Structure probing data (2A3 and DMS) for a 177-nucleotide construct. For DMS, 866 sequencing reads were counted. In probing experiments dimethyl sulfate is read out at A N1 and C N3, which are open when not base-paired. 2A3 adducts were read by reverse transcription with SuperScript II with manganese. The reactions ran in a buffer of 150 mM KOAc, 10 mM MgCl2 and 150 mM bicine (pH 8.5), at 24 C. For DMS the reverse transcriptase was MarathonRT.
[RMDB]
RNA sequence: GGGAACGACUCGAGUAGAGUCGAAAAUUCAAGGGUCACAUAUGCAUUUCACCUGGACUAUGAAAAGUGGAACAACCAUCAAAGAUUAGAGUCAACAGAGGAUGUAUUUUCUGUCCUAGAUCAAGUGCGUUUUUAUCCCGUUCGCGGGAUAAAAACGAAAAGAAACAACAACAACAAC
Reactivity to 2A3 in 0.01 (KOAc 150mM, MgCl2 10mM, bicine 150mM(pH8.5), 24C), signal-to-noise 2, nucleotides 027 to 126: u150u050c000a060a080g070g070g040u010c000a010c030a070u060a000u090g050c000a000u000u030u170c000a040c060c000u000g070g000a030c000u020a070u300g110a130a070a020a000g100u090g000g000a200a000c070a160a060c040c070a080u070c050a120a000a080g010a000u080u060a010g040a000g150u000c030a040a010c000a220g040a010g010g020a000u000g040u000a000u000u240u000u040c060u000g010u030c010c010u060a060g050a100u070c120a130a090g130u120g100
Reactivity to DMS in 0.01 (KOAc 150mM, MgCl2 10mM, bicine 150mM(pH8.5), 24C), signal-to-noise 1, nucleotides 027 to 126: u000u020c010a060a120g000g000g020u020c020a070c180a060u090a000u000g050c050a090u000u000u000c000a130c010c000u000g000g010a110c060u000a000u000g040a200a000a240a050g020u050g000g020a070a040c240a070a090c070c000a010u000c050a250a000a000g050a240u010u000a000g060a110g000u050c010a060a080c070a000g000a180g000g000a110u020g000u000a080u030u080u000u000c120u000g000u000c080c000u000a060g000a000u000c080a000a120g000u000g040